[RMDB]
RNA sequence: GGGAACGACUCGAGUAGAGUCGAAAAUCUAAGAGCGUAACACACACUCAGACUGUACGACAGUCUGACACACACAUACGCUAGUGUAUCGUGUGUGUGAUAUCGAUGUAGCACGAAAUUGAAAGAAGUGUAAGACGCUAUUCGUAGCGUCUUACACAAAAGAAACAACAACAACAAC
Reactivity to DMS in 0.01 (KOAc 150mM, MgCl2 10mM, bicine 150mM(pH8.5), 24C), signal-to-noise 3, nucleotides 027 to 126: u010c030u010a090a120g000a150g000c020g000u000a080a160c070a070c070a050c100a080c110u010c020a020g000a000c000u010g010u010a170c300g020a170c000a000g000u010c000u020g000a050c120a040c020a020c000a020c000a010u000a030c020g030c210u010a050g020u000g020u000a040u000c130g010u010g000u000g020u000g010u000g000a050u000a060u000c100g000a050u000g010u000a130g010c130a050c030g010a050a020a080u010u010g000a110a070a130g010a080a090
Reactivity to 2A3 in 0.01 (KOAc 150mM, MgCl2 10mM, bicine 150mM(pH8.5), 24C), signal-to-noise 3, nucleotides 027 to 126: u060c040u040a100a000g010a010g120c060g030u090a080a000c020a000c000a000c000a000c080u050c020a000g010a010c010u030g010u120a100c180g150a060c180a010g000u000c000u010g010a000c000a000c000a010c000a010c000a010u050a030c010g050c130u050a080g100u070g010u230a030u070c110g000u000g000u000g000u000g010u000g010a010u040a050u100c090g030a080u050g040u050a020g090c020a010c090g050a060a080a080u090u150g090a100a120a110g100a140a040